[RMDB]
RNA sequence: GGGAACGACUCGAGUAGAGUCGAAAACUUCCGGAGAUCUCUCUCGAGCUCCUCCGCCUUUCUUCUUGUUGAGAUCCAUUUCUCGAGGAUCUCCUCCCUUGUUCCCCUUCGACUCCUCUUCGUCUCGGUUUGGCUCAUCCUCGGGACGAGGCGAGGGCUAUACGGGAGUGUUCGCACUCCCGUAUAGAAAAGAAACAACAACAACAAC
Reactivity to 2A3 in 0.01 (KOAc 150mM, MgCl2 10mM, bicine 150mM(pH8.5), 24C), signal-to-noise 1, nucleotides 027 to 156: c020u200u110c030c040g040g040a070g010a040u020c010u010c000u020c020u020c150g010a020g020c020u020c020c010u030c020c010g000c010c000u080u190u050c000u180u060c020u070u210g020u120u220g050a010g000a020u000c010c010a110u090u260u080c180u140c100g080a130g020g000a010u000c000u000c000c000u000c000c000c000u020u100g030u040u020c030c010c000c040u050u030c040g070a090c020u060c000c000u000c000u060u020c030g000u020c000u000c020g030g040u030u160u070g180g000c070u100c120a150u150c010c010u050c040g000g000g010a000c000g000a000g000g000c020g010a010g020g020g000
The data come from the RNA Mapping Database (RMDB), library VIROID. The record gives the reactivity of an RNA of 207 nucleotides to 2A3.